[RMDB]
RNA sequence: GGGAACGACUCGAGUAGAGUCGAAAAAUCCUCAGGUUAAUAAGCGUGAUGAUUGGGUGUUCAUGCUCCAUGCAUGACAUGUGCCUCCUUUGAACCUUGUUACGACCUUGGCACAUUACCCAUCUGAAAAAGACGUUCGCGUUCGCGCGAACGUCAAGUGUCCAUUCUUGUUCGCAAGAAUGGACACAAAAGAAACAACAACAACAAC
Reactivity to 2A3 in 0.01 (KOAc 150mM, MgCl2 10mM, bicine 150mM(pH8.5), 24C), signal-to-noise 1, nucleotides 027 to 156: a000u010c000c000u030c010a020g010g080u000u030a200a030u110a250a050g110c110g060u090g040a090u060g010a050u180u280g010g000g030u030g030u020u020c000a000u000g010c020u030c110c170a120u300g000c000a010u010g030a030c050a000u000g000u000g000c000c000u120c000c030u060u040u180g040a060a070c020c030u110u200g070u000u190a060c100g050a080c020c050u030u070g000g040c010a000c000a000u030u070a000c000c000c000a030u010c010u060g090a120a100a000a000a000g000a000c000g000u000u000c000g000c060g030u030u060c280g000c000g000c000g050a000a000c000g000u000c000a000a000
An RNA of 207 nucleotides, treated with 2A3 and read out base by base. The RNA was probed in 150 mM KOAc, 10 mM MgCl2 and 150 mM bicine (pH 8.5) at 24 C.